[RMDB]
RNA sequence: GGGAACGACUCGAGUAGAGUCGAAAAGACUUUAAAGUUUGAACUUUAUGGCGCUUUUUCUGCUGUUACAUGGUUCAAGUAAAAGUGGAUUGGGUCAUCUACCGUGUGGUGAUUCUCGAACGGCUCAGGACGAACAAGCGUUCGCGUUUGUUCGUCCAAAAGAAACAACAACAACAAC
Reactivity to 2A3 in 0.01 (KOAc 150mM, MgCl2 10mM, bicine 150mM(pH8.5), 24C), signal-to-noise 7, nucleotides 027 to 126: g040a020c010u090u060u080a090a070a040g050u030u110u120g070a060a020c010u020u080u100a040u070g030g000c020g070c090u110u100u020u110u050c080u100g030c020u070g030u090u060a050c030a070u110g060g010u010u040c040a040a010g010u040a040a040a010a000g020u030g020g030a060u010u070g060g010g010u020c000a040u000c040u030a050c040c020g040u060g030u080g050g070u040g030a100u060u000c020u020c020g060a110a060c040g040g000c010u010c060a040
Reactivity to DMS in 0.01 (KOAc 150mM, MgCl2 10mM, bicine 150mM(pH8.5), 24C), signal-to-noise 3, nucleotides 027 to 126: g000a090c000u000u000u010a030a050a070g000u020u010u030g000a060a080c030u000u010u000a050u010g000g000c010g030c070u000u020u020u030u030c110u010g020c010u020g020u000u010a070c080a060u010g000g010u000u010c060a010a030g020u000a020a020a010a040g010u000g010g010a120u000u000g000g000g000u000c020a090u000c040u010a070c040c020g000u010g000u000g010g010u000g010a090u010u020c020u000c040g010a080a100c090g010g010c020u010c110a190